An RNA of 177 nucleotides, treated with 2A3 and DMS and read out base by base. The reactions ran in a buffer of 150 mM KOAc, 10 mM MgCl2 and 150 mM bicine (pH 8.5), at 24 C. Values cover nucleotides 27 to 126.
RNA sequence: GGGAACGACUCGAGUAGAGUCGAAAAGAUAUGGACAUAGGUGCUAGCUUACAGUCGGAAACGACUGCGGAGCUUGGACCACCGUCCUAAGUCAAAAGCGAUCCAUACCUUCGGGUAUGGAUCGCAACUAAUAUCAUGAGUUCGCUCAUGAUAUUAGAAAAGAAACAACAACAACAAC
Reactivity to 2A3 in 0.01 (KOAc 150mM, MgCl2 10mM, bicine 150mM(pH8.5), 24C), signal-to-noise 5, nucleotides 027 to 126: g030a030u100a040u180g010g000a010c030a040u190a220g030g000u130g220c030u040a010g000c000u000u010a010c000a010g000u010c010g010g020a080a090a040c010g000a000c000u000g010c080g230g000a000g000c000u000u040g010g060a010c000c000a010c020c030g000u000c000c000u020a150a030g070u050c040a030a000a110a080g000c000g000a000u000c000c000a010u010a010c000c010u060u160c300g090g000g000u000a000u000g000g000a000u000c000g000c000a000a000
Reactivity to DMS in 0.01 (KOAc 150mM, MgCl2 10mM, bicine 150mM(pH8.5), 24C), signal-to-noise 7, nucleotides 027 to 126: g010a070u000a300u010g000g000a020c020a110u010a190g020g030u000g000c000u000a020g030c000u000u000a070c000a000g010u000c000g010g010a100a100a210c010g010a010c000u000g010c030g010g000a000g000c000u000u000g010g000a030c040c000a080c300c150g010u000c000c000u000a040a110g000u010c050a090a060a100a100g010c000g010a010u000c010c000a010u000a000c000c000u000u010c230g020g000g010u000a000u010g000g000a000u000c000g010c000a000a020